RNA sequence: GGGAACGACUCGAGUAGAGUCGAAAAAGUAAAUACCUAAAGUAAUAAUGUUGGAUAGUGCUUGAAUUAUCUGUUUUUGACUACCUUCUAUUAGUCUGUGGUGAGCUCAAGUAAUUGAAACCCCUGAUGCAAGUAAUACAGAUGUAUUCAGGAGGGACAUAGUCAAUGUUUUCGAACAUUGACUAUGAAAAGAAACAACAACAACAAC
Reactivity to 2A3 in 0.01 (KOAc 150mM, MgCl2 10mM, bicine 150mM(pH8.5), 24C), signal-to-noise 1, nucleotides 027 to 156: a000g050u050a070a110a070u110a140c000c010u060a160a090a060g080u050a040a260u060a160a000u040g050u040u000g030g030a050u010a140g150u130g000c040u030u040g030a060a080u150u080a000u050c030u040g100u110u150u000u040u020g030a000c010u010a060c030c030u240u050c000u060a250u170u020a090g000u000c030u060g000u010g060g050u030g000a030g000c050u000c030a030a010g000u090a030a090u060u080g130a050a110a000c040c000c000c040u030g000a010u040g000c000a030a020g110u040a000a140u140a300c060a030g060a050u040g010u000a050u000u080c000a000g000g060a090g030g040g000a000
Reactivity to DMS in 0.01 (KOAc 150mM, MgCl2 10mM, bicine 150mM(pH8.5), 24C), signal-to-noise 1, nucleotides 027 to 156: a060g040u000a100a050a110u000a280c030c080u000a060a030a140g000u000a160a070u010a070a060u020g020u000u000g010g010a180u000a140g030u030g000c030u000u010g000a000a010u010u010a020u000c010u040g000u000u030u000u000u030g010a060c030u000a020c080c040u030u000c060u000a100u040u000a070g040u000c070u040g010u010g020g050u000g000a090g000c150u010c020a050a080g000u010a100a110u010u010g000a030a140a110c070c020c010c010u010g010a090u000g020c040a040a080g010u010a070a100u000a140c070a200g020a120u000g000u000a030u000u000c030a030g010g000a130g040g010g010a200
Source information
The record gives the reactivity of an RNA of 207 nucleotides to 2A3 and DMS. 2A3 adducts were read by reverse transcription with SuperScript II with manganese. It was measured as part of the RMDB library OK3TST. Reactivities are given for positions 27 through 156. The RNA was probed in 150 mM KOAc, 10 mM MgCl2 and 150 mM bicine (pH 8.5) at 24 C.